[RMDB]
RNA sequence: GGGAACGACUCGAGUAGAGUCGAAAAGGAUUUGAAAAAUGCAAUUACAUCACGGAUCCAGAGGAGAUUCUGAAAGCACUGAAUAUGAAAGCCGCGGUUGGCGCGAUGUACAGUGGGAAAAAGAAGGCUUCAAUGCUUCUUUCGAGAAGCAUUGAAGAAAAGAAACAACAACAACAAC
Reactivity to DMS in 0.01 (KOAc 150mM, MgCl2 10mM, bicine 150mM(pH8.5), 24C), signal-to-noise 3, nucleotides 027 to 126: g030g010a060u000u050u000g020a000a080a050a080a020u030g010c110a080a100u030u020a190c140a050u040c030a110c110g010g030a050u000c050c010a130g010a110g020g000a120g000a060u010u000c010u010g030a140a070a120g010c020a030c040u030g020a060a070u010a080u040g000a130a060a170g000c030c000g000c170g000g000u000u040g010g000c010g020c130g000a050u010g000u030a050c020a030g000u000g010g000g000a020a050a080a100a040g010a070a010g010g000
Reactivity to 2A3 in 0.01 (KOAc 150mM, MgCl2 10mM, bicine 150mM(pH8.5), 24C), signal-to-noise 3, nucleotides 027 to 126: g010g000a010u070u070u150g180a170a100a010a010a000u130g030c030a040a180u160u070a160c050a010u060c040a000c090g040g000a020u000c010c010a010g000a050g150g000a140g030a070u030u070c070u050g080a100a050a030g110c000a040c030u020g040a170a010u100a040u130g040a100a040a080g020c040c050g000c140g060g070u120u130g040g000c030g000c030g050a030u030g020u040a070c000a000g060u040g000g030g080a000a010a100a090a000g110a060a000g090g000